An RNA of 207 nucleotides, treated with 2A3 and read out base by base. It was measured as part of the RMDB library OK3TST. The reactions ran in a buffer of 150 mM KOAc, 10 mM MgCl2 and 150 mM bicine (pH 8.5), at 24 C. 2A3 adducts were read by reverse transcription with SuperScript II with manganese. The 2A3 profile rests on 676 reads.
RNA sequence: GGGAACGACUCGAGUAGAGUCGAAAAGAUUUGAGGACCAUUCCAUCCUUUGGCUUCACCAUGUUCAAAUGUGGUCUCCAAGGUCACACUAAAGGUGUCUUCGUUGCACCCAUUCAGAAGAGAAAAGAGCAUGUGAGAUGUGGUCAUUGGAGGGUACGGGGACUUAGUGAUUCGUCACUAAGUCCCCAAAAGAAACAACAACAACAAC
Reactivity to 2A3 in 0.01 (KOAc 150mM, MgCl2 10mM, bicine 150mM(pH8.5), 24C), signal-to-noise 1, nucleotides 027 to 156: g050a050u120u200u290g120a080g080g110a080c040c030a040u080u060c000c000a130u020c050c000u030u000u010g000g000c000u000u000c010a010c040c000a000u000g000u000u000c030a060a060a050u190g160u210g090g000u010c000u040c050c000a020a010g080g000u070c010a000c000a030c060u200a090a090a030g050g000u020g000u000c020u010u030c070g140u060u050g010c040a000c000c000c000a000u050u060c100a060g210a260a020g050a010g020a050a130a000a000g020a010g060c030a000u020g100u070g110a150g020a150u030g000u010g100g000u010c000a000u010u030g000g010a000g000g020g040u060a090c100